Background:
This 177-nucleotide RNA was probed chemically with 2A3 and DMS. The reactions ran in a buffer of 150 mM KOAc, 10 mM MgCl2 and 150 mM bicine (pH 8.5), at 24 C. 2A3 adducts were read by reverse transcription with SuperScript II with manganese. It was measured as part of the RMDB library OK1LIB.
RNA sequence: GGGAACGACUCGAGUAGAGUCGAAAAAUGCAGGCGUUUGUGAGGGGCAAGUCGCGAAGCCGCUGCCAACUGACACGUGUUUGCUGGAGUGCUUCUCGGGCGCCGUCGGGAUUCACGCUGGUAAAUCGAGGCUAAAUGCAUUCGUGCAUUUAGCCUCAAAAGAAACAACAACAACAAC
Reactivity to 2A3 in 0.01 (KOAc 150mM, MgCl2 10mM, bicine 150mM(pH8.5), 24C), signal-to-noise 3, nucleotides 027 to 126: a000u150g000c030a020g040g000c050g010u070u110u120g120u160g000a040g020g060g010g010c070a050a020g080u170c050g050c020g060a040a020g050c090c010g010c040u030g030c020c020a130a070c090u110g040a060c010a000c080g150u110g060u020u020u030g000c010u030g000g010a060g040u050g030c030u000u000c030u030c000g040g000g000c050g030c050c040g000u060c010g030g000g000a010u080u090c010a010c030g010c010u060g030g080u060a060a060a050u180c120
Reactivity to DMS in 0.01 (KOAc 150mM, MgCl2 10mM, bicine 150mM(pH8.5), 24C), signal-to-noise 1, nucleotides 027 to 126: a020u070g000c160a120g000g000c000g040u000u000u000g010u050g000a130g000g000g050g010c000a010a040g060u000c020g010c020g000a050a110g010c080c050g000c020u000g050c000c020a050a170c090u010g030a080c140a080c130g040u010g000u040u000u050g030c060u090g000g030a070g000u040g010c050u000u000c000u000c060g080g030g020c040g000c000c030g000u000c070g010g010g020a020u000u000c040a050c020g020c060u000g020g000u020a050a040a100u060c110